[RMDB]
RNA sequence: GGGAACGACUCGAGUAGAGUCGAAAAAGUCGGCGCCGUCGCUGAUCGCCUUCGCGGAAGUGACCGAUGCCGGCGCGCUGGAAGUCACCUUUCCGCUGUGCUUGGAUGCCAGUGUGACCGGCGCGCGGUUGAGCAACUGUUUCGACAGUUGCUCAACAAAAGAAACAACAACAACAAC
Reactivity to 2A3 in 0.01 (KOAc 150mM, MgCl2 10mM, bicine 150mM(pH8.5), 24C), signal-to-noise 2, nucleotides 027 to 126: a000g150u110c020g010g000c010g020c020c000g020u000c000g000c000u020g060a300u050c020g000c010c010u130u170c250g000c020g030g000a040a000g010u000g000a010c050c010g050a070u060g020c000c020g040g020c020g000c010g030c000u030g030g060a150a080g090u060c010a050c070c000u000u040u010c030c010g010c020u020g050u180g050c050u100u200g260g090a130u300g000c000c000a030g020u050g070u060g100a070c020c000g010g000c000g000c000g000c000g070
Reactivity to DMS in 0.01 (KOAc 150mM, MgCl2 10mM, bicine 150mM(pH8.5), 24C), signal-to-noise 2, nucleotides 027 to 126: a080g000u010c010g010g010c030g010c050c070g000u000c000g010c010u000g000a140u010c030g020c010c230u010u020c170g000c020g010g000a110a030g000u010g000a010c070c060g020a090u000g020c020c020g040g010c030g000c040g020c010u010g010g020a170a070g010u010c030a060c030c250u000u000u000c010c030g000c000u000g000u000g020c000u000u010g020g000a200u010g000c000c000a000g010u000g010u000g010a050c010c020g000g000c000g000c000g010c070g040